Source: RMDB library OK2TRN, as collected in RNAgym. This 177-nucleotide RNA was probed chemically with 2A3 and DMS. Reactivities are rounded to 0.1 and cut off at 0 and 3. The DMS profile rests on 6,944 reads. Values cover nucleotides 27 to 126. For 2A3, 7,899 sequencing reads were counted. Conditions: 150 mM KOAc, 10 mM MgCl2 and 150 mM bicine (pH 8.5), 24 C.
RNA sequence: GGGAACGACUCGAGUAGAGUCGAAAAUGGGUGUCUGGUGAGGCCACCCUCAUUCUCACAGUGUGCUAGACCAUGGUCAGGUCCAGGCCCCUGGGGGUCAUCCGGGCUACCACCCAUUGGUGGUAGCGGACAUAAGUUUCUUCGGAAACUUAUGUCCAAAAGAAACAACAACAACAAC
Reactivity to 2A3 in 0.01 (KOAc 150mM, MgCl2 10mM, bicine 150mM(pH8.5), 24C), signal-to-noise 4, nucleotides 027 to 126: u090g000g010g000u040g020u000c030u050g120g080u220g120a080g040g000c030c010a000c000c000c000u010c010a050u050u010c010u020c010a060c010a020g120u120g020u080g140c010u040a020g010a040c010c000a090u140g080g110u160c080a050g000g030u020c030c020a020g060g000c000c000c020c020u030g070g030g010g000g010u040c000a030u030c030c020g050g090g000c000u000a000c000c000a010c030c020c040a300u110u300g000g000u000g010g000u000a000g000c000
Reactivity to DMS in 0.01 (KOAc 150mM, MgCl2 10mM, bicine 150mM(pH8.5), 24C), signal-to-noise 5, nucleotides 027 to 126: u000g010g010g020u000g000u000c020u000g010g030u010g000a300g000g000c080c010a030c030c010c020u000c130a060u020u000c010u000c020a130c120a080g000u000g000u000g020c040u000a100g000a050c050c050a110u000g000g000u000c160a100g010g010u000c010c040a070g020g010c020c020c150c020u000g010g000g010g000g020u000c060a050u000c030c020g040g000g000c010u000a010c000c010a010c000c000c300a170u010u010g050g030u000g000g010u000a010g000c010